[RMDB]
RNA sequence: GGGAACGACUCGAGUAGAGUCGAAAAAGAAAGGAUACCGAAAGGUAUCCAAUUUGCACAUUGGAUUGCGGUAACCUCUCACGUGUGACGUUGUAGUAACUAUGUGCAGUAAUACCGCAAGAAAAAAUCAUUGUUUUAUCUUCGGAUAAAACAAUGAAAAAGAAACAACAACAACAAC
Reactivity to 2A3 in 0.01 (KOAc 150mM, MgCl2 10mM, bicine 150mM(pH8.5), 24C), signal-to-noise 3, nucleotides 027 to 126: a000g060a040a040a010g000g010a010u000a010c000c020g060a040a030a010g000g000u000a010u000c000c000a000a000u010u010u050g010c010a020c030a100u030u120g110g050a090u040u020g040c000g020g000u020a040a050c010c010u040c010u020c010a020c040g110u110g040u060g070a050c110g030u050u110g130u150a130g000u020a030a020c020u030a040u060g000u010g000c020a000g000u000a020a040u020a020c000c010g000c080a040a010g060a050a040a000a000a000a020
Reactivity to DMS in 0.01 (KOAc 150mM, MgCl2 10mM, bicine 150mM(pH8.5), 24C), signal-to-noise 5, nucleotides 027 to 126: a070g000a050a070a290g000g000a010u000a000c000c000g010a090a100a150g000g010u000a000u000c000c000a020a030u000u000u000g020c100a060c110a070u000u000g020g010a200u000u000g010c000g010g020u010a010a080c140c100u010c040u000c000a030c060g020u010g000u000g010a090c080g010u010u010g010u000a140g010u000a030a040c020u000a040u000g020u000g010c180a020g010u000a060a090u000a070c010c000g020c070a020a040g010a000a020a030a060a080a100